RNA sequence: GGGAACGACUCGAGUAGAGUCGAAAAUGGGUUCGACAACUCUGGGGAGAGAAGGGAGGAUCGGAUGGGAAGAGUAUAUCCUAUGGGAAUCCCUGGUUUCCCCUCACGUCCAGCCCCUCCCCGUGUCGUAUCCUAAAAAGUUCGCUUUUUAGGAUACAAAAGAAACAACAACAACAAC
Reactivity to DMS in 0.01 (KOAc 150mM, MgCl2 10mM, bicine 150mM(pH8.5), 24C), signal-to-noise 7, nucleotides 027 to 126: u010g010g030g020u000u000c300g000a030c050a070a100c150u010c060u010g020g010g010g010a050g000a040g000a210a040g010g000g000a070g000g020a200u010c060g000g010a060u010g000g000g000a030a090g010a170g010u010a090u010a060u010c010c000u000a110u010g000g000g000a300a120u000c010c000c010u000g000g010u000u000u000c000c000c000c020u000c060a030c150g010u000c010c090a060g010c050c000c000c150u000c010c000c000c100g020u010g010u000c120
Reactivity to 2A3 in 0.01 (KOAc 150mM, MgCl2 10mM, bicine 150mM(pH8.5), 24C), signal-to-noise 5, nucleotides 027 to 126: u100g000g000g010u020u030c020g030a000c020a140a040c070u060c150u170g000g000g000g000a020g000a010g020a040a030g010g000g010a010g010g010a050u100c050g070g040a070u110g070g010g010a070a030g080a070g250u080a050u020a020u140c010c010u010a050u100g040g020g020a020a040u020c010c010c000u020g140g020u010u010u000c000c000c000c000u010c010a020c020g010u010c010c010a010g000c010c000c020c000u030c000c000c000c010g090u060g030u050c060